[RMDB]
RNA sequence: GGGAACGACUCGAGUAGAGUCGAAAAGAAAGAAAGAAAGAACUCUGUAAAGUGAGGGAUUGCCUGGACCAGGUCGGCGGGCCUGCUCCAGUUUCCUUCGCUCUGCUCAACGGGCAGACUGCCACAAAAAACGCGUGGCUGUUCGCAGCCACGCGAACAUUCAACGAGAGUUCGCUCUCGUUGAAUGAAAAGAAACAACAACAACAAC
Reactivity to 2A3 in 0.01 (KOAc 150mM, MgCl2 10mM, bicine 150mM(pH8.5), 24C), signal-to-noise 1, nucleotides 027 to 156: g030a020a100a010g050a030a120a020g080a050a160a050g070a090a080c100u080c070u060g030u230a300a010a000g030u000g010a000g010g000g010a030u080u060g040c000c000u000g000g010a010c020c010a010g010g010u030c030g040g190c030g090g070g010c010c000u030g000c010u010c000c020a010g000u000u000u000c000c010u000u010c010g030c000u020c000u000g000c000u010c030a110a090c080g000g000g000c010a000g010a200c090u070g000c030c000a120c050a120a150a060a030a050a020c000g000c000g000u000g040g050c030u040g070u040u100c180g000c080a000g040c000c000a000c000g020c000g020a000a000